[RMDB]
RNA sequence: GGGAACGACUCGAGUAGAGUCGAAAAAUCAGCCUUCGUUCUGUAAACGGGGUUGAAUCCGACUCUCAUAGGCUCUCCAACCCAACUCCUACUCAAUACGUCCUCGUCGUACAGAACGGUAACAUGUAAAACGAAGGCUGCUUCGGCAGCCUUCGAACAUUCAGAGGGAGUUCGCUCCCUCUGAAUGAAAAGAAACAACAACAACAAC
Reactivity to 2A3 in 0.01 (KOAc 150mM, MgCl2 10mM, bicine 150mM(pH8.5), 24C), signal-to-noise 1, nucleotides 027 to 156: a000u010c000a000g070c000c040u100u230c090g000u030u030c040u180g180u250a140a070a000c040g010g010g000g000u000u000g020a000a000u060c030c000g010a020c000u050c000u010c020a130u110a050g020g010c000u010c000u050c110c020a070a120c000c000c000a000a110c010u060c030c050u050a050c000u060c040a080a000u010a110c010g100u000c010c000u030c040g090u040c040g000u010a030c000a110g030a060a000c020g070g020u080a100a050c070a090u180g130u270a060a080a000a000c000g000a000a000g030g010c000u010g050c000u050u060c060g040g010c020a000g030c000c000u000u000c000g000a040a000